RNA sequence: GGGAACGACUCGAGUAGAGUCGAAAACUGGGAAGUCCAAGAUUAAAAACUCAGCAGAUUCAGCGUCUGGGGAGGGCCCACUUCCUGAUCCAUAGAGGGCUGUCUUUCGACUGUAUUUAGACAUGGCCACAAAUAUCAUGUUCGCAUGAUAUUUGUGAAAAGAAACAACAACAACAAC
Reactivity to DMS in 0.01 (KOAc 150mM, MgCl2 10mM, bicine 150mM(pH8.5), 24C), signal-to-noise 4, nucleotides 027 to 126: c080u010g000g000g000a090a060g010u000c080c080a060a090g000a150u010u020a050a080a070a150a130c060u000c020a050g020c020a070g010a070u010u010c140a110g010c190g020u000c020u000g020g010g000g010a070g010g000g000c080c020c050a080c090u000u010c020c020u010g000a080u000c040c050a090u010a080g000a100g010g000g010c030u000g000u000c030u000u000u010c080g010a080c050u000g000u000a090u000u000u000a070g020a070c100a090u000g000g010c150
Reactivity to 2A3 in 0.01 (KOAc 150mM, MgCl2 10mM, bicine 150mM(pH8.5), 24C), signal-to-noise 3, nucleotides 027 to 126: c030u040g020g040g040a040a020g040u020c040c030a040a040g050a170u140u260a090a120a060a060a110c030u040c030a020g010c020a020g100a130u120u070c040a040g080c020g120u020c020u040g080g010g020g010a030g010g030g000c000c050c000a020c030u050u040c010c010u040g050a100u020c020c020a020u060a100g100a100g050g040g040c010u000g040u010c010u040u080u060c050g090a090c030u060g040u150a120u050u080u070a040g010a030c030a080u100g090g000c020